[RMDB]
RNA sequence: GGGAACGACUCGAGUAGAGUCGAAAAGGAGGACGAAGCAUAUUUCUGUUUCUGGAGGAUUAUUUAUAAUCUGCCGGAAAGUCUUGCAGGUGGCUGGGAUAUGUUCACUCUGGUAGAAUUAAGCACGAAAACGUGUCCUUGUUCGCAAGGACACGAACGACUCAGAAUUGUUCGCAAUUCUGAGUCGAAAAGAAACAACAACAACAAC
Reactivity to 2A3 in 0.01 (KOAc 150mM, MgCl2 10mM, bicine 150mM(pH8.5), 24C), signal-to-noise 1, nucleotides 027 to 156: g050g000a000g000g010a010c030g070a050a030g030c030a000u030a040u120u220u050c070u080g020u000u060u000c000u000g000g020a110g000g010a000u010u000a020u030u200u030a100u070a060a010u000c010u030g110c050c020g000g010a050a000a000g000u030c060u090u120g030c080a000g010g040u050g000g000c050u060g020g000g000a010u030a010u090g000u020u020c030a030c000u060c030u050g060g000u040a030g080a050a060u190u120a110a000g030c080a030c150g130a020a020a020a050c010g000u000g010u010c040c000u000u010g030u050u000c100g000c080a000a000g020g010a010c000a010c000g000a000a000
Annotation: The record gives the reactivity of an RNA of 207 nucleotides to 2A3. The reactions ran in a buffer of 150 mM KOAc, 10 mM MgCl2 and 150 mM bicine (pH 8.5), at 24 C. The 2A3 profile rests on 621 reads.